RNA sequence: GGGAACGACUCGAGUAGAGUCGAAAAGAUAUGGAAUGAUCCACAUUUCGACGAUCAACUAUCGGAAACGAUAGUUGGGAGAAGGGUGGAGUCAUUCCUAAGUCAAACGGUGCGUUCGCGCACCGAACUAUGGUGAAUCGUUCGCGAUUCACCAUAGAAAAGAAACAACAACAACAAC
Reactivity to DMS in 0.01 (KOAc 150mM, MgCl2 10mM, bicine 150mM(pH8.5), 24C), signal-to-noise 4, nucleotides 027 to 126: g010a040u000a300u010g000g010a020a010u000g000a100u000c000c000a010c010a170u010u000u010c000g030a150c280g010a080u000c000a010a000c000u000a000u000c000g010g000a110a070a150c000g010a000u000a000g010u000u000g000g000g000a050g000a030a040g000g000g050u000g000g000a030g000u000c010a010u000u000c000c000u000a020a100g010u010c030a100a120a300c040g020g020u000g010c010g020u000u000c300g020c010g020c000a010c000c000g000a020a110
Reactivity to 2A3 in 0.01 (KOAc 150mM, MgCl2 10mM, bicine 150mM(pH8.5), 24C), signal-to-noise 2, nucleotides 027 to 126: g030a020u070a040u180g000g000a010a000u010g000a000u000c010c010a020c040a110u060u140u060c300g170a300c020g000a100u020c010a000a000c000u010a020u010c000g000g040a110a020a030c010g000a000u010a000g000u000u010g010g010g040a010g010a020a020g260g100g010u010g010g010a040g050u030c000a000u000u000c000c000u000a070a030g040u040c060a130a130a070c030g000g020u000g000c010g030u040u100c300g000c000g000c110a000c020c000g000a040a000
This 177-nucleotide RNA was probed chemically with DMS and 2A3. The data come from the RNA Mapping Database (RMDB), library TTRDES. Values are in units of 0.01, from 0 to 300, in steps of 10. Conditions: 150 mM KOAc, 10 mM MgCl2 and 150 mM bicine (pH 8.5), 24 C.